[RMDB]
RNA sequence: GGGAACGACUCGAGUAGAGUCGAAAAUAUGUGGUCGCUGACCGCUUUUAUCACCAAGGUGAUAUUGGUGCCGUGGAUUAUGUAUCGCGCAUUUCGCCAGAUGGAAGACCCUAAAGCCAACGGCGGCAAUGUAUGAAGACUUCGGUCUUCAUACAUUAAAAGAAACAACAACAACAAC
Reactivity to 2A3 in 0.01 (KOAc 150mM, MgCl2 10mM, bicine 150mM(pH8.5), 24C), signal-to-noise 4, nucleotides 027 to 126: u200a070u080g040u050g020g000u020c020g060c300u140g020a050c010c020g010c000u020u080u020u050a050u030c020a010c030c010a070a080g120g000u020g020a030u010a040u080u130g040g000u030g010c040c040g060u040g110g010a040u020u050a100u300g090u040a040u070c030g000c010g000c120a040u100u100u030c010g010c010c000a050g000a090u110g030g020a030a030g050a090c020c000c010u100a100a070a000g030c000c010a020a040c020g020g000c000g000g020c030
Reactivity to DMS in 0.01 (KOAc 150mM, MgCl2 10mM, bicine 150mM(pH8.5), 24C), signal-to-noise 7, nucleotides 027 to 126: u000a030u010g020u010g010g020u000c020g020c140u010g000a080c130c060g000c030u000u000u010u000a010u000c020a030c010c030a100a180g040g010u010g010a020u000a030u000u000g010g010u000g020c080c060g010u000g010g000a060u000u000a050u010g010u000a100u000c050g000c110g020c130a110u000u000u000c030g020c010c020a130g010a180u010g000g010a060a110g000a130c020c010c010u000a060a080a120g000c030c030a040a170c100g010g010c030g020g010c280